[RMDB]
RNA sequence: GGGAACGACUCGAGUAGAGUCGAAAAGGGCACGCUUACGCAUUACUGGGAGGACGCUAACGGACGUAUCUCAUCCCAUUAUUCGCCUAGGCACCGUCUGCGGACCUGUGACCCGGAGACGAAGGACUCGUCUACGUUCAGCGCCUGCGAUGACACGGUAAUAUUCCGAGUUCGCUCGGAAUAUUACAAAAGAAACAACAACAACAAC
Reactivity to DMS in 0.01 (KOAc 150mM, MgCl2 10mM, bicine 150mM(pH8.5), 24C), signal-to-noise 1, nucleotides 027 to 156: g010g050g050c050a080c090g030c110u000u020a080c020g000c030a210u000u040a100c080u000g000g030g050a230g010g000a050c050g000c060u010a090a220c110g000g070a080c030g020u000a070u000c100u010c050a160u000c050c020c000a220u010u000a050u010u000c030g000c040c020u000a050g010g020c020a120c000c010g030u000c000u000g000c020g000g010a030c030c030u010g020u000g010a060c040c020c010g020g020a110g000a040c030g000a080a080g000g030a110c070u000c070g060u000c010u000a050c040g010u000u000c060a100g000c070g030c000c030u000g020c080g040a080u000g000a080c070a080c080g020
Reactivity to 2A3 in 0.01 (KOAc 150mM, MgCl2 10mM, bicine 150mM(pH8.5), 24C), signal-to-noise 4, nucleotides 027 to 156: g010g010g010c040a020c100g040c020u050u100a050c030g000c040a010u050u110a060c070u050g010g010g020a020g010g020a030c010g000c040u090a110a020c060g070g050a030c010g070u090a160u020c050u020c060a100u030c010c010c000a010u050u050a050u050u040c060g000c010c020u050a010g020g000c030a000c060c030g020u030c030u100g040c020g020g000a080c000c050u110g030u120g070a110c030c010c000g000g010a020g000a010c020g020a090a070g070g010a060c030u020c040g030u010c060u040a050c040g030u040u070c030a010g020c010g030c090c010u050g010c050g080a090u100g060a030c020a020c120g100
Structure probing data (DMS and 2A3) for a 207-nucleotide construct. Source: RMDB library OK3TST, as collected in RNAgym. For DMS, 2,709 sequencing reads were counted. DMS adducts were read by reverse transcription with MarathonRT. Reactivities are rounded to 0.1 and cut off at 0 and 3.